Structure probing data (2A3) for a 207-nucleotide construct. The RNA was probed in 150 mM KOAc, 10 mM MgCl2 and 150 mM bicine (pH 8.5) at 24 C.

RNA sequence: GGGAACGACUCGAGUAGAGUCGAAAAAGCAGGAGUACGCUCCUGCAUGGGUAGACGAAUUGACCCCAACUGAAGUUCAAUUCUAACGUUAAAAGGAGUUUUAUAUGACUGGACGCACGCGUCCAGAUGACGAUUUCAUUCUUCGGAAUGAAAUCAAGUGAUACAAAGACUUCGGUCUUUGUAUCACAAAAGAAACAACAACAACAAC
Reactivity to 2A3 in 0.01 (KOAc 150mM, MgCl2 10mM, bicine 150mM(pH8.5), 24C), signal-to-noise 2, nucleotides 027 to 156: a000g000c010a000g000g000a010g000u020a030c180g040c080u000c000c000u000g000c020a000u000g000g000g010u140a160g030a220c090g000a010a000u010u000g000a000c000c000c000c000a040a050c160u300g020a030a020g010u070u000c000a000a000u010u000c020u120a160a060c120g070u120u170a010a090a040a090g130g040a180g010u120u110u030u040a120u040a090u170g120a110c030u020g000g000a000c000g030c000a060c090g140c040g060u000c000c000a000g000a000u040g000a030c120g000a000u010u000u000c000a000u010u000c010u010u000c060g100g010a000a000u000g000a000a000a000u000c000a000a040